[RMDB]
RNA sequence: GGGAACGACUCGAGUAGAGUCGAAAAAGUAAAUCUGAUAUCGUCGCCAUAGCUUCAAUCGUCGACCAAACAAAUUCAAGCCUCGCCAUCGUGCGGGGCUUUCAAGCUACCUGCUUCGGCAGGUAGCGGAACAUAAUUCGUUCGCGAAUUAUGUUCCAAAAGAAACAACAACAACAAC
Reactivity to DMS in 0.01 (KOAc 150mM, MgCl2 10mM, bicine 150mM(pH8.5), 24C), signal-to-noise 3, nucleotides 027 to 126: a130g000u030a080a080a070u010c040u010g010a090u000a080u010c070g050u000c040g050c020c050a060u010a090g000c030u000u000c060a040a040u000c060g020u000c050g030a110c040c020a060a060a080c220a080a110a130u000u000c160a030a010g010c000c020u000c010g020c000c010a120u010c300g000u000g010c010g000g000g000g000c020u000u010u000c050a020a180g000c000u000a020c000c000u000g020c010u000u010c190g020g000c000a000g000g010u010a000g010c030
An RNA of 177 nucleotides, treated with DMS and read out base by base.
The reactions ran in a buffer of 150 mM KOAc, 10 mM MgCl2 and 150 mM bicine (pH 8.5), at 24 C.
For DMS the reverse transcriptase was MarathonRT.
Reactivities are given for positions 27 through 126.